The record gives the reactivity of an RNA of 177 nucleotides to DMS. Source: RMDB library TTRINS, as collected in RNAgym. DMS adducts were read by reverse transcription with MarathonRT.
[RMDB]
RNA sequence: GGGAACGACUCGAGUAGAGUCGAAAAGAUAUGGAUAGGAACUACACCUGUACUGACGUUGAAAGUCAAGGCAGGUCGGAAACGACCUGCCUUGACUGGAGUCAAGACAGGUGCCUAUCCUAAGUCACCUAUUUAUCAUCUUCGGAUGAUAAAUAGGAAAAGAAACAACAACAACAAC
Reactivity to DMS in 0.01 (KOAc 150mM, MgCl2 10mM, bicine 150mM(pH8.5), 24C), signal-to-noise 2, nucleotides 027 to 126: g030a040u010a300u020g000g000a000u020a000g000g010a160a040c070u020a300c010a010c000c000u000g000u010a030c010u000g000a020c000g000u020u020g020a190a160a030g000u000c000a000a010g010g050c000a020g020g000u010c010g000g000a070a110a250c020g040a000c000c000u000g010c000c010u000u000g000a000c010u000g000g020a040g000u000c010a000a080g000a030c010a010g010g010u000g000c010c010u000a010u000c000c000u000a020a050g010u010c030a290